[RMDB]
RNA sequence: GGGAACGACUCGAGUAGAGUCGAAAAAAGGUGCCAUCAUAUCGGUUAAGAACUCUUAACUCUGAUGGCUUUCGAGUUAUGUGGUGCAAUGAAGCUCUCCCUUCAAAUGGUCGUACAGUUCCGUGAAGUAUCUAUUUUGGUUCGCCAAAAUAGAUACAAAAGAAACAACAACAACAAC
Reactivity to 2A3 in 0.01 (KOAc 150mM, MgCl2 10mM, bicine 150mM(pH8.5), 24C), signal-to-noise 5, nucleotides 027 to 126: a010a000g110g020u040g000c050c000a010u000c020a010u080a050u240c060g010g010u020u010a020a020g050a250a210c060u020c000u300u010a010a000c000u010c040u100g000a010u010g000g010c000u000u030u020c010g000a010g010u070u070a080u160g070u070g030g020u050g010c030a080a080u120g040a080a050g000c000u000c010u030c030c010c000u020u020c020a030a080a080u110g040g000u010c010g010u030a070c020a070g020u090u000c020c020g040u070g050a080a020
Reactivity to DMS in 0.01 (KOAc 150mM, MgCl2 10mM, bicine 150mM(pH8.5), 24C), signal-to-noise 8, nucleotides 027 to 126: a060a070g010g010u000g000c010c000a020u000c010a040u010a110u010c230g000g000u000u010a010a020g000a240a150c300u010c010u000u000a000a010c000u000c090u000g010a020u000g000g010c020u010u000u000c040g010a080g010u000u000a050u010g000u000g010g010u000g010c060a060a080u000g010a060a060g000c040u000c040u000c020c030c020u000u000c070a050a080a110u010g010g010u000c030g010u000a070c100a080g010u000u000c020c020g020u000g000a090a120
An RNA of 177 nucleotides, treated with 2A3 and DMS and read out base by base. The RNA was probed in 150 mM KOAc, 10 mM MgCl2 and 150 mM bicine (pH 8.5) at 24 C. The DMS profile rests on 11,979 reads. The data come from the RNA Mapping Database (RMDB), library M2PK90. As a SHAPE reagent, 2A3 marks flexible, mostly unpaired nucleotides at the ribose 2'-OH. For DMS the reverse transcriptase was MarathonRT.